Background: An RNA of 207 nucleotides, treated with 2A3 and read out base by base.
RNA sequence: GGGAACGACUCGAGUAGAGUCGAAAAGACUCGGGCCCAUGCGGCUUCGACGCCUAAAUCUGGUCAGGACCGGAAGGUAGCAGCCACAAGGGAUGCUUGAAUCUGGCGUGGAUUCCGGGUCACCUAAAAAACCAUGGACCCGUUCGCGGGUCCAUGGGUUCUAAUUCAGUUUCGACUGAAUUAGAACAAAAGAAACAACAACAACAAC
Reactivity to 2A3 in 0.01 (KOAc 150mM, MgCl2 10mM, bicine 150mM(pH8.5), 24C), signal-to-noise 3, nucleotides 027 to 156: g000a000c000u000c000g000g020g000c000c000c000a000u010g010c010g010g000c000u000u000c010g010a000c000g010c000c010u070a140a140a080u120c090u050g000g040u140c010a010g020g020a010c000c000g090g120a140a060g030g000u010a010g000c010a000g000c000c010a050c060a070a070g040g010g000a090u080g040c130u000u050g000a020a010u000c020u080g300g030c020g000u000g010g000a080u220u140c000c010g000g020g000u000c010a020c000c000u100a110a060a050a020a010a000c000c000a000u000g000g010a000c030c040c000g020u040u070c240g000c050g100g010g030u000c000c000a000u000g000g020
For 2A3, 2,255 sequencing reads were counted.